[RMDB]
RNA sequence: GGGAACGACUCGAGUAGAGUCGAAAACGACGUAAUCAAUCAGGAGGCAGAGGCCGACGAACGUGGCCUAAUGAAUCCGAAAACGACGGUCAAGGAUCACUUCGACGCGGCCAAAUCCGAUGUCGAAGGAAUCGAUACAGUUCGCUGUAUCGAUUCCAAAAGAAACAACAACAACAAC
Reactivity to 2A3 in 0.01 (KOAc 150mM, MgCl2 10mM, bicine 150mM(pH8.5), 24C), signal-to-noise 4, nucleotides 027 to 126: c020g040a020c030g070u120a040a130u170c140a050a050u070c060a120g040g030a020g040g060c080a050g050a070g210g010c000c020g020a010c020g030a050a020c090g000u010g000g010c000c000u040a090a060u090g050a010a050u040c020c000g070a100a110a060a120c230g140a040c030g000g020u050c030a030a040g040g010a210u060c010a010c010u000u000c010g060a070c030g010c000g050g010c050c010a040a040a010u020c010c010g030a070u090g010u010c010g020a020a040
Reactivity to DMS in 0.01 (KOAc 150mM, MgCl2 10mM, bicine 150mM(pH8.5), 24C), signal-to-noise 3, nucleotides 027 to 126: c090g030a070c060g000u030a090a160u000c150a160a110u010c080a170g000g010a060g000g020c140a090g000a240g000g030c010c000g000a130c030g000a060a060c150g010u010g010g000c010c000u000a070a060u000g010a070a080u000c010c000g000a080a070a160a200c290g010a060c040g010g000u000c040a090a200g000g030a040u000c040a090c010u000u000c020g000a070c140g000c020g010g010c040c120a020a140a160u020c010c020g000a060u020g030u000c010g000a090a110
The record gives the reactivity of an RNA of 177 nucleotides to 2A3 and DMS. For 2A3 the reverse transcriptase was SuperScript II with manganese. Source: RMDB library OK2TRN, as collected in RNAgym. For DMS the reverse transcriptase was MarathonRT. For 2A3, 3,723 sequencing reads were counted. The RNA was probed in 150 mM KOAc, 10 mM MgCl2 and 150 mM bicine (pH 8.5) at 24 C.